[RMDB]
RNA sequence: GGGAACGACUCGAGUAGAGUCGAAAAAUUUAGUUGCUCUGCAAAACCUACAAUUUCUUUUGUACUGCUAAACGCCUUACCUGCGUUCAUGCCUAUUCGUGAAACUAUUUUUGCAGUAUCUAAGUAAGGGUAAUGAGGUAUUCGUACCUCAUUACCCAAAAGAAACAACAACAACAAC
Reactivity to DMS in 0.01 (KOAc 150mM, MgCl2 10mM, bicine 150mM(pH8.5), 24C), signal-to-noise 2, nucleotides 027 to 126: a100u010u000u000a060g010u000u020g000c070u020c010u010g070c150a130a090a100a130c110c060u000a120c130a110a200u040u000u010c010u000u010u050u000g000u010a020c050u050g000c030u000a080a070a040c080g040c010c080u000u000a020c080c120u010g000c120g050u010u010c120a030u010g000c100c180u010a110u000u020c010g000u000g000a100a060a120c050u000a060u000u010u010u010u000g020c000a020g010u000a050u000c010u000a040a020g000u030a130a130
Reactivity to 2A3 in 0.01 (KOAc 150mM, MgCl2 10mM, bicine 150mM(pH8.5), 24C), signal-to-noise 2, nucleotides 027 to 126: a000u040u050u050a010g000u000u120g070c000u000c000u070g000c080a030a030a170a140c020c020u070a080c120a070a190u050u130u060c040u000u150u040u080g000u050a020c010u060g000c020u050a020a100a000c040g000c050c000u060u210a130c030c020u110g000c000g050u050u040c000a050u040g040c040c000u200a160u090u280c000g020u020g030a040a040a010c110u070a200u050u030u000u020u000g030c010a000g000u080a020u060c050u010a020a000g030u030a030a210
An RNA of 177 nucleotides, treated with DMS and 2A3 and read out base by base. 2A3 adducts were read by reverse transcription with SuperScript II with manganese.